Chemical mapping of a 177-nucleotide RNA with DMS and 2A3.
Reactivities are rounded to 0.1 and cut off at 0 and 3.
For DMS the reverse transcriptase was MarathonRT.
The data come from the RNA Mapping Database (RMDB), library OK1LIB.
For 2A3, 1,439 sequencing reads were counted.
Conditions: 150 mM KOAc, 10 mM MgCl2 and 150 mM bicine (pH 8.5), 24 C.

RNA sequence: GGGAACGACUCGAGUAGAGUCGAAAAAUAUUUUCCAGAACAGUCAUGUGCGGGAAGAGGUUGAAGUGCUGGAAGACCAUACCGAUAUUUUCCCGGACCAGAUCCACGUCAGUCUUUUUGUCCGUCAAUUAUCGCAGCAGUUCGCUGCUGCGAUAAUAAAAGAAACAACAACAACAAC
Reactivity to DMS in 0.01 (KOAc 150mM, MgCl2 10mM, bicine 150mM(pH8.5), 24C), signal-to-noise 2, nucleotides 027 to 126: a020u070a020u040u000u000u000c000c000a100g020a120a110c120a080g010u020c220a040u020g040u000g000c080g020g000g000a030a000g000a060g000g060u000u000g000a080a070g010u020g000c010u030g030g000a120a060g010a130c050c070a060u020a050c150c060g010a060u000a050u020u030u000u000c000c000c000g070g000a160c070c070a060g000a160u050c050c020a010c000g010u010c060a020g020u000c020u000u000u000u000u000g000u040c000c000g000u000c070a100
Reactivity to 2A3 in 0.01 (KOAc 150mM, MgCl2 10mM, bicine 150mM(pH8.5), 24C), signal-to-noise 3, nucleotides 027 to 126: a000u190a080u030u060u010u030c000c010a020g060a070a030c070a080g170u160c080a060u070g020u130g010c020g000g000g030a000a030g010a040g020g020u000u020g040a050a050g000u020g000c070u050g100g050a100a050g060a060c000c000a080u090a080c000c050g080a020u050a140u270u020u030u030c010c000c000g000g020a000c010c000a060g000a050u070c030c000a000c010g070u060c010a050g030u030c000u040u040u020u100u130g090u040c010c000g050u000c040a080

Record summary: The DMS profile rests on 2,078 reads.